The record gives the reactivity of an RNA of 177 nucleotides to DMS and 2A3. For 2A3, 1,661 sequencing reads were counted. DMS adducts were read by reverse transcription with MarathonRT.

[RMDB]
RNA sequence: GGGAACGACUCGAGUAGAGUCGAAAAACUACCUUCCCUGUGCUAUUCCAUCAGCCUACAGACCUGGUACCUGGAUUUUUGCCCGAGAUGAUUCCUACCACCUUACUACUGACGAAGACACCCAUUCACAAGCAGUAAAGUUCGCUUUACUGCUUGUAAAAGAAACAACAACAACAAC
Reactivity to DMS in 0.01 (KOAc 150mM, MgCl2 10mM, bicine 150mM(pH8.5), 24C), signal-to-noise 4, nucleotides 027 to 126: a090c080u010a110c050c030u000u000c010c010c020u000g000u010g010c030u010a100u020u000c040c040a060u000c050a080g000c040c030u000a080c080a090g010a110c060c010u000g010g010u000a050c050c020u000g000g010a070u000u000u000u000u000g010c000c010c010g000a080g000a050u000g000a150u010u000c040c020u000a100c050c040a040c040c030u000u010a050c050u000a050c050u000g010a100c070g020a060a060g000a110c130a120c000c000c020a130u000u000c150
Reactivity to 2A3 in 0.01 (KOAc 150mM, MgCl2 10mM, bicine 150mM(pH8.5), 24C), signal-to-noise 2, nucleotides 027 to 126: a020c070u070a070c050c000u050u080c010c010c000u000g040u060g030c000u040a110u130u090c040c030a080u020c080a060g020c000c020u050a070c020a070g100a110c040c030u040g040g030u060a050c010c020u030g010g150a160u030u050u020u070u130g060c010c000c000g040a050g010a070u120g030a070u060u060c010c000u020a020c000c000a000c030c010u000u050a030c000u030a020c010u020g030a010c050g020a050a020g080a000c000a050c060c000c000a030u090u060c070
The RNA was probed in 150 mM KOAc, 10 mM MgCl2 and 150 mM bicine (pH 8.5) at 24 C. Source: RMDB library RFMREP, as collected in RNAgym.